[RMDB]
RNA sequence: GGGAACGACUCGAGUAGAGUCGAAAAGAUAUGGAACACUCGACCGAAGAACCGUAACAUCAUUCGGAAACGAAUGUGGGGGAGGUCGGGUGUUCCUAAGUCAAACCCACAGGUUCGCCUGUGGGAACCCAGAAUAUAGGUUCGCCUAUAUUCUGGGAAAAGAAACAACAACAACAAC
Reactivity to DMS in 0.01 (KOAc 150mM, MgCl2 10mM, bicine 150mM(pH8.5), 24C), signal-to-noise 6, nucleotides 027 to 126: g010a030u000a200u010g000g000a010a010c000a010c010u000c000g010a010c000c000g020a140a150g000a140a180c020c020g010u010a080a130c120a040u010c020a020u000u000c000g020g000a060a040a090c000g010a010a000u000g010u000g000g010g000g010g010a060g010g020u000c000g010g000g010u000g010u000u000c000c000u000a000a070g000u000c020a090a140a140c010c000c000a010c000a000g000g000u000u020c250g020c000c010u000g020u000g000g000g010a010a020
Reactivity to 2A3 in 0.01 (KOAc 150mM, MgCl2 10mM, bicine 150mM(pH8.5), 24C), signal-to-noise 5, nucleotides 027 to 126: g000a000u040a020u080g000g000a010a000c010a000c000u010c000g010a010c010c000g120a300a080g040a150a110c030c030g100u150a070a090c040a170u270c010a020u010u040c000g010g000a040a020a010c000g000a020a010u020g010u040g020g050g030g000g020a120g000g000u000c000g000g000g000u000g000u000u000c000c000u000a000a000g000u000c000a000a040a150c000c020c000a000c000a000g050g080u070u100c200g110c070c000u000g000u000g000g000g000a010a010
An RNA of 177 nucleotides, treated with DMS and 2A3 and read out base by base. Values are in units of 0.01, from 0 to 300, in steps of 10. For 2A3 the reverse transcriptase was SuperScript II with manganese. It was measured as part of the RMDB library TTRDEL. For DMS, 10,596 sequencing reads were counted.